[RMDB]
RNA sequence: GGGAACGACUCGAGUAGAGUCGAAAAGUAGUGGAGAAGAAAGAAGUGGAAACACUUCGCGCACGUCCACUACAGCGUGCGCAGUAUUGGAGUGUUUGAGGGAGAACCUCAAGCACUCCAGUACAAAAUUACCCGUAGUGUUCGCACUACGGGUAAUAAAAGAAACAACAACAACAAC
Reactivity to 2A3 in 0.01 (KOAc 150mM, MgCl2 10mM, bicine 150mM(pH8.5), 24C), signal-to-noise 7, nucleotides 027 to 126: g030u050a010g020u090g160g160a180g050a210a050g050a040a160a020g010a000a010g000u000g000g000a020a060a010c000a000c000u020u010c000g010c000g020c000a010c010g040u070c040c040a040c020u010a010c010a000g000c010g000u010g000c020g000c050a040g000u000a010u000u010g000g000a000g000u000g010u010u000u010g010a010g010g070g010a180g090a260a220c000c000u000c000a000a000g000c000a000c000u010c000c000a000g000u000a000c000a000a020a000
Reactivity to DMS in 0.01 (KOAc 150mM, MgCl2 10mM, bicine 150mM(pH8.5), 24C), signal-to-noise 5, nucleotides 027 to 126: g010u030a010g010u010g010g040a140g010a100a100g000a110a110a080g010a010a000g020u000g000g000a160a110a180c020a000c010u000u010c030g010c030g000c030a020c050g010u010c030c050a130c030u000a020c020a170g000c030g020u000g000c000g000c030a160g010u000a000u010u000g010g000a010g020u000g000u010u000u000g000a010g000g000g000a220g020a130a160c000c010u000c000a000a000g000c010a000c000u000c000c000a000g010u000a010c000a090a050a090